Annotation: Structure probing data (DMS) for a 177-nucleotide construct. The RNA was probed in 150 mM KOAc, 10 mM MgCl2 and 150 mM bicine (pH 8.5) at 24 C. For DMS the reverse transcriptase was MarathonRT. Source: RMDB library OK2TST, as collected in RNAgym.
RNA sequence: GGGAACGACUCGAGUAGAGUCGAAAAUCUGGGGUUUCAAAAGGGCACUAAUCCCCUUCAUGAGGGUUCCGUCCUCCUGACCUAAUCACCCCCAAAGGCCCCACCUCUAAAUACCAUCACAUUGGGGCUGAGAGAAUCAGUUCGCUGAUUCUCUCAGAAAAGAAACAACAACAACAAC
Reactivity to DMS in 0.01 (KOAc 150mM, MgCl2 10mM, bicine 150mM(pH8.5), 24C), signal-to-noise 2, nucleotides 027 to 126: u010c120u010g020g030g000g000u010u000u010c100a070a110a080a130g040g010g000c100a130c170u000a090a130u010c060c010c000c070u000u000c100a040u010g010a040g020g000g050u000u000c110c110g040u000c010c010u010c040c050u010g010a090c110c090u000a120a110u000c090a230c110c020c000c040c050a120a130a130g000g000c010c000c000c020a050c090c010u050c100u000a040a080a070u010a080c100c030a090u000c110a080c130a080u000u000g010g010g000g040